[RMDB]
RNA sequence: GGGAACGACUCGAGUAGAGUCGAAAAGGGUAGACAUCACGCCGGUUCGGUACCUGAAGGUGUCGAACGGUCCGCUCACUCGGCGGUAUCUGCUCGGCGAGAACGGGCGGUGCGACUACCAGGUGCGCAUACGCGUAAGCUUCGGCUUACGCGUAUGAAAAGAAACAACAACAACAAC
Reactivity to 2A3 in 0.01 (KOAc 150mM, MgCl2 10mM, bicine 150mM(pH8.5), 24C), signal-to-noise 5, nucleotides 027 to 126: g080g000g000u030a000g100a160c030a080u090c050a040c120g020c020c020g080g000u040u000c010g000g010u010a010c010c000u160g210a300a110g040g000u010g000u000c000g000a020a000c000g000g000u000c010c000g020c010u000c000a080c010u030c010g190g000c010g070g060u050a170u070c100u110g060c070u060c060g020g070c010g020a030g000a150a070c100g000g010g000c020g000g020u040g020c050g060a030c000u020a020c000c010a030g100g070u140g040c100g000
Reactivity to DMS in 0.01 (KOAc 150mM, MgCl2 10mM, bicine 150mM(pH8.5), 24C), signal-to-noise 8, nucleotides 027 to 126: g010g020g010u000a020g010a140c060a060u000c110a130c300g000c010c010g000g020u000u000c010g010g010u000a000c010c010u000g020a140a130g020g030u000g010u000c000g000a010a020c010g000g010u000c010c010g000c020u000c040a120c060u000c040g000g000c010g010g000u010a070u010c190u020g010c080u000c020g020g000c010g010a040g010a070a100c140g010g000g000c020g000g000u000g010c070g010a060c010u010a040c010c010a100g000g000u000g010c150g010
The record gives the reactivity of an RNA of 177 nucleotides to 2A3 and DMS. Reactivities are rounded to 0.1 and cut off at 0 and 3. The RNA was probed in 150 mM KOAc, 10 mM MgCl2 and 150 mM bicine (pH 8.5) at 24 C. For DMS, 13,529 sequencing reads were counted.